Chemical mapping of a 177-nucleotide RNA with 2A3 and DMS. The DMS profile rests on 1,856 reads.
RNA sequence: GGGAACGACUCGAGUAGAGUCGAAAAUGAGCGUGGACCUGAAGGUCGGAGAGGUACUGCUGAUCGAUGGUACUGCCAUCCGCCUGGAAAAGAAGUCCGGGCAGGUGGCGCGCCUGCAGAUCUCGGCAUCGGGUGGUUUAUUCGUAAACCACCCGAUAAAAGAAACAACAACAACAAC
Reactivity to 2A3 in 0.01 (KOAc 150mM, MgCl2 10mM, bicine 150mM(pH8.5), 24C), signal-to-noise 1, nucleotides 027 to 126: u040g000a030g030c040g040u090g060g050a050c010c010u030g080a110a020g070g020u050c070g040g050a110g000a000g000g110u120a100c020u070g030c010u030g030a040u050c040g030a010u070g000g000u060a070c050u060g030c020c010a010u020c000c000g000c000c000u010g000g040a040a020a040a100g250a170a050g110u040c000c000g000g000g040c020a020g020g000u000g020g000c020g000c010g030c000c000u080g010c020a030g000a040u000c040u040c040g050g010c010
Reactivity to DMS in 0.01 (KOAc 150mM, MgCl2 10mM, bicine 150mM(pH8.5), 24C), signal-to-noise 2, nucleotides 027 to 126: u000g010a060g010c030g030u000g020g010a090c020c020u000g010a190a070g020g010u010c040g040g000a090g010a130g020g050u020a060c060u010g020c080u000g000a020u000c050g010a110u000g010g010u020a100c140u000g020c010c000a000u000c020c050g000c000c000u000g000g010a020a020a080a200g030a120a200g000u000c000c000g030g010g010c000a000g010g000u000g000g000c000g000c020g020c010c000u010g000c140a140g000a060u000c010u000c070g000g030c130
For 2A3 the reverse transcriptase was SuperScript II with manganese.